[RMDB]
RNA sequence: GGGAACGACUCGAGUAGAGUCGAAAAUGCAUUAGAUAUGGAGCAAGAGUAUCUCGCGUUGAAACUCGUCGGAAACGACGAGUGGAGCGAGUUACAAAGUACUUGAUGACCUCCUAAGUCGACCGAAGUCUACCUAAAACUUCGGUUUUAGGUAGACAAAAGAAACAACAACAACAAC
Reactivity to 2A3 in 0.01 (KOAc 150mM, MgCl2 10mM, bicine 150mM(pH8.5), 24C), signal-to-noise 4, nucleotides 027 to 126: u120g020c040a060u120u060a070g040a040u050a030u130g030g010a020g020c080a180a090g100a030g140u010a020u030c010u000c000g020c020g230u270u010g000a010a000a000c000u000c000g000u010c000g000g020a020a030a040c010g000a010c000g000a000g000u000g000g000a010g000c000g000a010g000u000u000a020c000a000a070a010g110u100a130c050u080u160g020a070u200g110a300c000c000u000c000c010u020a070a040g030u000c010g000a080c010c040g060a160a040
Reactivity to DMS in 0.01 (KOAc 150mM, MgCl2 10mM, bicine 150mM(pH8.5), 24C), signal-to-noise 5, nucleotides 027 to 126: u010g020c110a090u000u010a160g010a050u000a250u020g010g010a050g010c060a070a100g010a230g010u000a010u000c000u000c010g020c010g020u000u020g000a160a140a030c000u000c000g000u000c000g000g000a060a060a170c000g020a000c000g000a010g010u000g010g010a040g010c010g010a010g010u000u000a030c090a120a070a160g000u010a070c060u000u000g000a100u020g010a120c300c000u000c010c010u000a030a110g010u010c040g000a100c060c040g000a090a130